This 207-nucleotide RNA was probed chemically with DMS and 2A3. The RNA was probed in 150 mM KOAc, 10 mM MgCl2 and 150 mM bicine (pH 8.5) at 24 C. For DMS, 2,900 sequencing reads were counted. 2A3 adducts were read by reverse transcription with SuperScript II with manganese. For 2A3, 2,674 sequencing reads were counted. The data come from the RNA Mapping Database (RMDB), library M2RFPK.
RNA sequence: GGGAACGACUCGAGUAGAGUCGAAAAAUAGAGAUUGGAGUCAUACAACCCCAGAAACCAUUCCUUAUACCUUGAGUAUUGCUGAAUUCAGUUUAGCGUGGAUGCUCUUGGCUAUUCUCAUAGUGAUAAAAUCUGUAGUCCUUCGGGACUACAGAAAGUAAUAAUAGUUGUUCGCAACUAUUAUUACAAAAGAAACAACAACAACAAC
Reactivity to DMS in 0.01 (KOAc 150mM, MgCl2 10mM, bicine 150mM(pH8.5), 24C), signal-to-noise 2, nucleotides 027 to 156: a060u000a120g010a070g010a120u000u000g000g030a130g020u010c040a120u000a120c070a020a070c000c000c020c010a150g010a130a080a110c030c000a090u000u000c030c010u000u000a200u000a070c010c030u010u000g020a050g030u010a040u000u000g000c020u000g020a050a070u000u000c180a160g010u000u000u000a010g030c010g060u000g050g030a120u000g030c000u000c010u000u000g000g030c040u000a070u000u000c040u000c030a110u000a070g000u000g000a110u000a050a080a080a130u000c020u000g000u000a030g010u000c000c000u000u010c300g020g000g030a010c000u000a000c000a010g000a010a000a060
Reactivity to 2A3 in 0.01 (KOAc 150mM, MgCl2 10mM, bicine 150mM(pH8.5), 24C), signal-to-noise 4, nucleotides 027 to 156: a000u130a010g050a000g020a010u030u060g020g000a050g080u060c050a030u080a210c080a120a120c060c010c020c010a040g090a060a090a030c050c010a040u060u110c010c010u100u110a070u030a160c000c000u000u030g000a010g010u030a050u060u150g030c000u020g010a040a060u160u160c040a150g120u020u020u060a020g020c030g020u080g160g020a020u030g000c010u000c000u000u010g020g000c010u090a090u150u020c050u020c040a120u120a080g100u080g090a080u110a130a090a030a090u010c000u000g000u000a000g000u000c000c000u010u040c100g060g000g000a000c010u010a000c000a000g000a000a000a000